[RMDB]
RNA sequence: GGGAACGACUCGAGUAGAGUCGAAAAGCUGUGCCUAGGUAAGCCUAUAUCUGGGCGCACUACAGGCACUAUGUCGCAUCAUGGUCCCUGUGAACUCGAAGCUUGAUGCGACAAGUUUUGAGUGAUCUCAGACAGUAUAGGCUUACUUCGUGAGAGCCUUUUAUCCACCAUUCGUGGUGGAUAAAAGAAAAGAAACAACAACAACAAC
Reactivity to 2A3 in 0.01 (KOAc 150mM, MgCl2 10mM, bicine 150mM(pH8.5), 24C), signal-to-noise 4, nucleotides 027 to 156: g040c030u060g070u120g070c000c000u010a000g010g000u010a000a000g010c010c000u020a030u030a070u300c010u010g000g000g000c000g000c010a000c000u270a150c000a040g030g070c070a010c040u100a210u160g000u000c010g000c020a000u010c000a010u050g100g090u160c050c060c050u110g080u080g110a120a070c060u040c150g050a100a040g050c020u020u010g000a000u010g020c000g010a010c000a010a000g000u010u010u070u050g010a010g010u010g050a070u020c000u000c010a010g000a080c030a010g020u020a010u010a010g000g000c000u010u000a000c000u030u020c010g030u060g040a190g010a020g040c010
Reactivity to DMS in 0.01 (KOAc 150mM, MgCl2 10mM, bicine 150mM(pH8.5), 24C), signal-to-noise 2, nucleotides 027 to 156: g050c020u000g020u020g030c000c000u000a060g000g000u010a020a150g000c010c020u010a050u020a020u000c010u010g000g040g000c060g000c050a030c010u000a110c030a080g020g040c070a060c040u000a090u000g020u010c080g000c090a100u000c020a030u010g010g010u010c030c000c030u000g000u010g020a100a110c030u000c010g010a040a050g010c010u000u010g010a070u000g010c080g010a080c010a000a030g000u000u000u010u020g000a070g020u010g000a070u000c040u000c050a110g000a100c090a140g020u020a070u000a030g020g000c010u010u010a020c000u010u000c040g000u000g010a150g010a120g010c080
The record gives the reactivity of an RNA of 207 nucleotides to 2A3 and DMS. 2A3 adducts were read by reverse transcription with SuperScript II with manganese. The 2A3 profile rests on 3,261 reads.